This 177-nucleotide RNA was probed chemically with DMS and 2A3. The reactions ran in a buffer of 150 mM KOAc, 10 mM MgCl2 and 150 mM bicine (pH 8.5), at 24 C. For DMS the reverse transcriptase was MarathonRT.

[RMDB]
RNA sequence: GGGAACGACUCGAGUAGAGUCGAAAACGACCGUAGCGGAUGUUGUAGGCGAUGGUGUCGUUGAAAAGCACGGUGUCCUGCGGCACCAUGCCGAUCACCUUGCGCAGGCUCUUCUGCGUCACCGUGCAUGACCGUAGGUGUUCGCACCUACGGUCAUAAAAGAAACAACAACAACAAC
Reactivity to DMS in 0.01 (KOAc 150mM, MgCl2 10mM, bicine 150mM(pH8.5), 24C), signal-to-noise 1, nucleotides 027 to 126: c190g000a120c030c060g000u040a090g000c110g000g010a050u010g000u000u000g000u000a250g000g000c000g010a000u010g020g010u000g000u000c030g000u000u000g010a040a040a110a070g060c000a000c000g000g000u070g000u010c030c200u120g020c010g000g010c030a050c020c080a060u020g000c000c000g000a190u020c090a200c070c090u000u000g020c010g010c020a090g000g010c240u000c240u040u060c000u010g000c030g000u000c010a010c040c000g040u000g000c050
Reactivity to 2A3 in 0.01 (KOAc 150mM, MgCl2 10mM, bicine 150mM(pH8.5), 24C), signal-to-noise 2, nucleotides 027 to 126: c120g040a020c040c030g010u060a030g020c080g120g040a160u080g040u100u040g050u140a040g000g030c070g100a060u090g000g000u030g000u000c000g010u000u060g080a080a090a000a000g000c000a000c040g000g000u000g040u080c040c060u120g020c030g000g010c000a000c020c000a020u120g000c070c010g000a010u090c000a020c010c000u060u110g030c000g000c000a010g030g000c080u100c020u270u040c000u040g070c040g000u000c000a010c030c000g000u000g000c000